[RMDB]
Conditions: 150 mM KOAc, 10 mM MgCl2 and 150 mM bicine (pH 8.5), 24 C. The record gives the reactivity of an RNA of 177 nucleotides to DMS and 2A3. 2A3 adducts were read by reverse transcription with SuperScript II with manganese. For 2A3, 2,455 sequencing reads were counted. 2A3 is a SHAPE reagent: it acylates the 2'-hydroxyl of flexible nucleotides of all four kinds.
RNA sequence: GGGAACGACUCGAGUAGAGUCGAAAAAAAGUUAGCGUACUAGAGUCGCCGUGAGUUCGCUAUGGUUCCGUGAGACUCUACUCGAGCGUAUCACGGAACCCACGUACAUACCGUACGUGCUAUAAAAGCGUGUAAAACGAUUCGUCGUUUUACACGCAAAAGAAACAACAACAACAAC
Reactivity to DMS in 0.01 (KOAc 150mM, MgCl2 10mM, bicine 150mM(pH8.5), 24C), signal-to-noise 1, nucleotides 027 to 126: a040a020a100g000u000u000a030g000c000g010u010a010c030u000a070g000a100g010u010c020g020c040c030g040u020g000a020g020u000u000c020g000c020u000a000u000g000g010u000u000c020c030g010u020g000a230g000a010c010u000c000u000a020c020u010c010g000a020g010c090g010u010a090u000c010a020c020g000g000a040a050c060c070c020a020c000g010u010a010c000a170u000a090c260c160g020u000a010c020g000u010g000c120u000a120u010a050a030a080a040
Reactivity to 2A3 in 0.01 (KOAc 150mM, MgCl2 10mM, bicine 150mM(pH8.5), 24C), signal-to-noise 2, nucleotides 027 to 126: a000a000a000g130u050u000a010g000c020g010u010a010c020u020a050g070a060g170u070c080g000c110c010g110u070g050a020g010u040u030c000g000c030u020a040u080g050g030u090u000c030c030g010u030g020a060g010a000c000u000c010u000a000c000u010c010g010a000g000c010g010u020a070u020c010a000c000g010g000a030a020c000c030c030a010c000g000u000a010c000a030u150a210c030c070g000u000a000c000g000u000g060c040u030a070u100a230a100a020a010